RNA sequence: GGGAACGACUCGAGUAGAGUCGAAAAAAGGGUAGCAGAAAGCUGGGAAAAAGCCACAGACGAAGCAAGAGAGUCAAGAUCUGUGGACGUAAGCUUGACCUUGCAUAAAAUGCUGUAUGCUCACCUCGAUCACCAGUCGUUUCGACGACUGGUGAUCAAAAGAAACAACAACAACAAC
Reactivity to DMS in 0.01 (KOAc 150mM, MgCl2 10mM, bicine 150mM(pH8.5), 24C), signal-to-noise 1, nucleotides 027 to 126: a030a220g000g000g000u000a000g100c000a000g010a100a140a050g000c000u040g030g010g030a030a050a050a210a140g000c000c000a030c000a030g030a000c190g000a160a090g080c060a200a090g000a020g000a090g000u030c030a060a080g040a140u000c000u070g030u000g000g000a080c250g020u050a040a180g020c070u000u000g000a130c100c010u110u100g030c100a150u060a080a000a080a060u030g000c000u000g020u040a140u050g060c020u000c050a060c060c000u190c110
Reactivity to 2A3 in 0.01 (KOAc 150mM, MgCl2 10mM, bicine 150mM(pH8.5), 24C), signal-to-noise 3, nucleotides 027 to 126: a000a000g020g010g000u010a000g000c010a010g030a000a000a000g000c050u020g000g020g140a000a150a230a000a000g070c010c000a030c000a000g040a050c000g060a090a030g010c030a140a030g110a040g020a010g230u100c030a010a000g050a180u000c000u020g000u030g030g000a000c010g210u170a010a020g010c000u040u030g000a030c000c000u010u020g000c030a070u200a150a200a000a030u270g000c010u010g030u130a070u020g000c000u000c040a050c000c020u020c060